Structure probing data (2A3) for a 207-nucleotide construct.
2A3 adducts were read by reverse transcription with SuperScript II with manganese.
Conditions: 150 mM KOAc, 10 mM MgCl2 and 150 mM bicine (pH 8.5), 24 C.
RNA sequence: GGGAACGACUCGAGUAGAGUCGAAAAGCUGGAGGACUAAGAAGGCUGAGUCUGGUGAAGCAAGACUCUGCUGAUACAAUCCUCCUAGAGAACAGGGUGGGCGAGAGCAGCCCUCACUGGAGGACACCACGGGGCUGACUGCACGACCCGACACGCAUCUACCUUGCCUGUUCGCAGGCAAGGUAGAAAAAGAAACAACAACAACAAC
Reactivity to 2A3 in 0.01 (KOAc 150mM, MgCl2 10mM, bicine 150mM(pH8.5), 24C), signal-to-noise 1, nucleotides 027 to 156: g030c030u010g000g000a000g000g020a000c040u070a210a040g010a050a000g150g000c020u030g010a040g000u000c020u070g070g000u210g200a030a040g050c050a020a000g000a000c000u000c000u000g000c000u000g000a040u020a210c030a000a020u000c000c000u000c000c000u000a030g000a000g000a040a000c010a110g120g000g030u020g010g050g030c070g000a040g020a000g070c020a000g000c000c020c000u040c010a040c000u000g010g020a060g050g170a070c050a020c090c030a050c050g000g030g000g000c000u000g040a220c060u020g050c070a010c100g100a100c000c010c000g010a000c020a000c110g140c020a020
Values cover nucleotides 27 to 156.